An RNA of 177 nucleotides, treated with DMS and 2A3 and read out base by base.
For DMS, 2,099 sequencing reads were counted.
The reactions ran in a buffer of 150 mM KOAc, 10 mM MgCl2 and 150 mM bicine (pH 8.5), at 24 C.
2A3 adducts were read by reverse transcription with SuperScript II with manganese.

RNA sequence: GGGAACGACUCGAGUAGAGUCGAAAAAGACAUACGUUCGCGUAUGUCUGACGGGCACCUGACCCUAAGGAAAUGCUCUAUGACAGGACUCACUGAUUGUGAUACCUCGAGAUUUCGAUCUCGAGAAGCACACUAUUCACUUCGGUGAAUAGUGUGCAAAAGAAACAACAACAACAAC
Reactivity to DMS in 0.01 (KOAc 150mM, MgCl2 10mM, bicine 150mM(pH8.5), 24C), signal-to-noise 3, nucleotides 027 to 126: a000g000a000c000a030u000a000c000g010u000u000c190g050c010g030u010a000u000g020u010c000u000g000a040c160g000g000g020c000a090c040c020u010g000a180c020c040c020u010a060a060g000g010a080a080a080u000g010c070u000c030u040a070u000g010a100c080a070g020g000a110c130u000c020a060c030u010g000a140u010u000g020u000g000a090u010a140c120c000u000c000g010a010g010a020u000u000u020c220g000a040u000c000u010c000g000a000g000a030a100
Reactivity to 2A3 in 0.01 (KOAc 150mM, MgCl2 10mM, bicine 150mM(pH8.5), 24C), signal-to-noise 2, nucleotides 027 to 126: a000g000a010c000a000u010a000c000g020u000u040c190g000c000g040u020a000u000g000u000c000u000g000a010c000g000g000g050c020a050c060c020u070g110a170c020c000c010u040a080a030g070g010a050a220a040u120g020c010u000c030u070a140u120g080a060c050a040g020g000a060c000u020c020a020c010u090g090a300u200u130g080u020g040a020u100a100c020c000u000c000g010a000g000a010u070u110u070c180g060a020u030c000u000c010g010a010g010a000a000